[RMDB]
RNA sequence: GGGAACGACUCGAGUAGAGUCGAAAACAGUAAAGGUAGCAACAGUGGUGAUUAACAGCCUGAUAGGGUGCUGCAGAGGCCCACUGUGUUGCUACUAAAGGUCUCUGCAGACGAUGAAAGACAUCGAACCCUCCCUAGUGUUCGCACUAGGGAGGGUAAAAGAAACAACAACAACAAC
Reactivity to DMS in 0.01 (KOAc 150mM, MgCl2 10mM, bicine 150mM(pH8.5), 24C), signal-to-noise 1, nucleotides 027 to 126: c050a140g030u010a080a040a100g000g000u040a000g000c000a030a030c050a120g000u000g000g020u030g000a140u030u050a060a100c060a210g000c000c010u000g020a300u080a070g000g000g000u010g010c010u000g000c020a040g010a000g040g000c000c000c060a010c080u000g000u030g000u050u000g050c000u000a040c030u000a040a010a040g000g000u000c000u010c020u040g000c010a030g000a160c030g010a000u000g010a230a120a030g070a140c030a000u000c000g000a190
Reactivity to 2A3 in 0.01 (KOAc 150mM, MgCl2 10mM, bicine 150mM(pH8.5), 24C), signal-to-noise 1, nucleotides 027 to 126: c030a000g050u110a140a300a000g080g090u010a000g000c000a000a000c010a020g010u000g020g010u160g130a110u190u170a120a040c030a030g050c020c000u000g030a070u170a090g110g010g000u090g010c000u000g000c000a000g030a000g000g030c010c000c000a030c000u000g000u000g000u000u000g000c040u060a000c000u000a000a000a000g000g010u000c000u000c000u000g000c010a030g000a080c000g000a000u030g000a000a060a110g150a010c000a000u050c090g010a050
An RNA of 177 nucleotides, treated with DMS and 2A3 and read out base by base. It was measured as part of the RMDB library OK1LIB. Conditions: 150 mM KOAc, 10 mM MgCl2 and 150 mM bicine (pH 8.5), 24 C. DMS adducts were read by reverse transcription with MarathonRT.